This 207-nucleotide RNA was probed chemically with DMS and 2A3.

RNA sequence: GGGAACGACUCGAGUAGAGUCGAAAAAAGUCCAUAUGCCCACCUUCGCUGGGGCGGGUGGAUGCUUAUACAUGCUAUGGAUGCCUACAUUUGAAAUAAUGUAGAUGCCUAAUACUCUCUCUCAGGGAGAGAGUUUAGAUGCCUCCAAAGCUUAUGCCACGGUAAAUCAUUUCGAUGAUUUACCGUGAAAAGAAACAACAACAACAAC
Reactivity to DMS in 0.01 (KOAc 150mM, MgCl2 10mM, bicine 150mM(pH8.5), 24C), signal-to-noise 2, nucleotides 027 to 156: a060a130g020u010c020c000a130u000a080u010g020c040c010c000a040c020c040u000u010c180g020c090u010g010g010g000g020c030g010g020g050u010g030g010a080u000g000c020u000u010a130u010a110c070a080u010g020c000u010a180u000g000g010a050u000g010c070c010u000a020c000a000u010u000u020g020a160a130a110u010a020a010u010g020u000a020g020a170u010g000c070c010u000a000a050u010a020c000u000c000u000c000u000c030u010c120a300g040g030g000a010g010a010g000a000g000u000u000u000a000g000a120u010g020c020c010u000c020c010a030a170a080g000c000u010u000a040u010g020c050
Reactivity to 2A3 in 0.01 (KOAc 150mM, MgCl2 10mM, bicine 150mM(pH8.5), 24C), signal-to-noise 3, nucleotides 027 to 156: a010a000g040u040c010c000a020u060a020u160g040c000c000c000a050c020c000u170u140c120g060c170u190g000g030g050g000c020g010g020g030u010g000g020a030u080g040c030u110u050a060u040a230c110a050u120g020c000u030a050u110g000g000a020u000g000c000c000u000a000c000a010u010u020u090g160a150a120a040u150a070a040u050g000u010a000g010a040u110g050c000c010u020a040a030u120a100c000u010c000u010c000u020c000u020c210a200g030g280g000a000g000a000g010a010g010u000u000u000a000g000a000u050g000c020c020u020c010c000a080a100a010g010c040u080u020a060u150g060c020

2A3 is a SHAPE reagent: it acylates the 2'-hydroxyl of flexible nucleotides of all four kinds.
DMS adducts were read by reverse transcription with MarathonRT.
The data come from the RNA Mapping Database (RMDB), library OK3TST.
Values cover nucleotides 27 to 156.
2A3 adducts were read by reverse transcription with SuperScript II with manganese.
Conditions: 150 mM KOAc, 10 mM MgCl2 and 150 mM bicine (pH 8.5), 24 C.